This 177-nucleotide RNA was probed chemically with DMS and 2A3. For DMS the reverse transcriptase was MarathonRT.
RNA sequence: GGGAACGACUCGAGUAGAGUCGAAAAGUGCCAAAUUGCAAGGACCAAACCAUCGGUCGAAAACGUCAUACCAUAUAACCAAUUCAAGAAGACGCAGCCGCGAUUCAACGGCAACUUUUCUGCACUAGCAUAUAAUCACUUUCGAGUGAUUAUAUGCAAAAGAAACAACAACAACAAC
Reactivity to DMS in 0.01 (KOAc 150mM, MgCl2 10mM, bicine 150mM(pH8.5), 24C), signal-to-noise 8, nucleotides 027 to 126: g020u000g020c040c060a080a090a060u010u000g010c070a100a090g000g010a050c030c040a060a100a140c100c100a040u010c100g010g020u000c040g000a060a060a110a080c090g010u000c040a070u000a110c050c030a050u010a060u010a090a110c060c060a060a110u010u000c090a060a050g000a110a040g010a030c060g000c110a170g000c050c040g020c030g000a100u010u000c170a080a060c070g000g000c010a060a080c180u000u000u000u000c030u000g020c130a100c170u000a130
Reactivity to 2A3 in 0.01 (KOAc 150mM, MgCl2 10mM, bicine 150mM(pH8.5), 24C), signal-to-noise 8, nucleotides 027 to 126: g050u040g020c010c000a030a030a090u090u070g020c030a060a050g110g000a030c010c020a050a030a080c060c010a100u120c070g000g020u020c020g040a030a050a030a030c020g020u010c010a030u050a130c010c010a050u080a020u040a200a050c040c020a070a050u100u150c050a090a030g050a050a020g030a090c030g030c050a020g040c030c030g010c020g060a080u100u090c040a060a020c030g010g010c000a020a040c010u050u020u040u020c040u060g020c050a050c130u070a040